[RMDB]
RNA sequence: GGGAACGACUCGAGUAGAGUCGAAAAGGGGUCCCUGUCAGCGACCCUUAGAGCUUGGAUUUAUGUGGCUGAAGCCUCCACGGCCACAUUGUCAGCUCUAAUGUGCUCGCUAGACAGGGACGGAGGCACCCAAAACGUCUGAGUUCGCUCAGACGAACAAGCGGAAUUACUUCGGUAAUUCCGCUUGAAAAGAAACAACAACAACAAC
Reactivity to 2A3 in 0.01 (KOAc 150mM, MgCl2 10mM, bicine 150mM(pH8.5), 24C), signal-to-noise 1, nucleotides 027 to 156: g060g010g000g000u010c010c000c000u000g000u010c000a000g000c000g010a010c030c010c000u000u000a000g000a010g000c040u170u260g210g000a110u240u300u080a030u070g010u000g030g000c000u040g000a140a020g040c020c000u000c000c010a000c000g010g030c000c000a010c000a000u000u010g000u010c080a020g020c000u000c000u000a000a020u060g020u080g070c040u010c000g000c000u050a110g000a000c000a000g000g020g000a000c000g000g000a010g020g020c020a060c000c020c000a030a100a000a030c000g030u020c000u000g030a040g010u050u120c080g070c030u000c010a010g000a000c020g010a010a020
Source: RMDB library RNAMAK, as collected in RNAgym.
The record gives the reactivity of an RNA of 207 nucleotides to 2A3.
The reactions ran in a buffer of 150 mM KOAc, 10 mM MgCl2 and 150 mM bicine (pH 8.5), at 24 C.
Reactivities are given for positions 27 through 156.
The 2A3 profile rests on 1,268 reads.